Chemical mapping of a 177-nucleotide RNA with 2A3 and DMS. For 2A3 the reverse transcriptase was SuperScript II with manganese. For 2A3, 1,972 sequencing reads were counted. Conditions: 150 mM KOAc, 10 mM MgCl2 and 150 mM bicine (pH 8.5), 24 C.
RNA sequence: GGGAACGACUCGAGUAGAGUCGAAAAAUGCAGGCGGGGUAGUGUGCUGCUCGGGCACAACUAGUUGAGAGCUGGGCCGCUCUCUUUAUGAGCCCAUGGUAGGGCGAAACCAGUUCGGUACGGCAUGCUUAGCGUUAUACUUCGGUAUAACGCUAAGAAAAGAAACAACAACAACAAC
Reactivity to 2A3 in 0.01 (KOAc 150mM, MgCl2 10mM, bicine 150mM(pH8.5), 24C), signal-to-noise 2, nucleotides 027 to 126: a000u070g000c010a010g030g060c030g020g050g060g000u030a060g020u050g020u010g070c020u030g030c040u040c020g010g010g010c020a010c010a060a140c020u050a030g070u040u090g040a010g010a020g020c010u040g040g140g000c030c000g020c020u010c000u010c000u040u050u020a120u030g080a020g010c040c020c040a040u110g010g070u100a080g010g030g000c020g000a040a020a030c000c000a000g000u050u040c010g000g070u060a050c000g000g000c030a030u100g000
Reactivity to DMS in 0.01 (KOAc 150mM, MgCl2 10mM, bicine 150mM(pH8.5), 24C), signal-to-noise 3, nucleotides 027 to 126: a050u010g010c050a060g010g010c070g000g010g020g020u000a040g020u000g010u010g010c000u000g020c110u000c130g020g000g030c030a020c050a050a030c050u000a040g000u010u000g000a060g010a020g010c010u010g010g000g010c090c080g020c020u000c010u000c040u000u000u010a060u010g010a300g010c010c030c020a090u010g010g010u000a070g010g000g000c020g000a050a050a040c050c030a050g010u000u000c050g010g010u000a040c070g010g010c060a070u010g000